RNA sequence: GGGAACGACUCGAGUAGAGUCGAAAACGUGGGAAGCAAGCUUCUCGAACUCGUUGCCCGGACGGAGCCGCGUGGAGGCAGGAACCUUGUCCGUCCAUAAGGUAAGAAAGAUAAGACCAGACUGUGACUUAAGAACUUACUUCGGUAAGUUCUUAAGAAAAGAAACAACAACAACAAC
Reactivity to DMS in 0.01 (KOAc 150mM, MgCl2 10mM, bicine 150mM(pH8.5), 24C), signal-to-noise 3, nucleotides 027 to 126: c090g030u040g010g000g000a040a030g030c070a120a160g030c020u000u000c000u010c030g000a050a140c160u000c040g000u000u010g000c000c010c040g020g000a020c040g000g020a070g010c050c030g000c120g030u010g000g000a080g010g010c040a090g010g000a080a080c050c060u000u000g010u000c010c040g000u000c010c000a050u010a070a050g010g010u010a030a060g020a030a060a070g000a110u010a050a070g000a090c020c060a070g000a130c110u010g020u010g020a160
Reactivity to 2A3 in 0.01 (KOAc 150mM, MgCl2 10mM, bicine 150mM(pH8.5), 24C), signal-to-noise 2, nucleotides 027 to 126: c050g050u140g000g050g000a090a020g060c130a100a020g050c100u000u050c000u000c030g050a110a050c010u010c050g040u020u040g100c020c010c000g000g000a010c000g010g010a050g050c040c050g040c040g060u090g080g050a020g030g000c010a020g070g030a040a050c020c000u050u070g040u000c010c000g040u000c020c010a030u080a050a040g020g030u020a030a040g050a090a100a010g060a050u090a060a060g050a040c000c020a030g040a060c040u040g050u060g120a010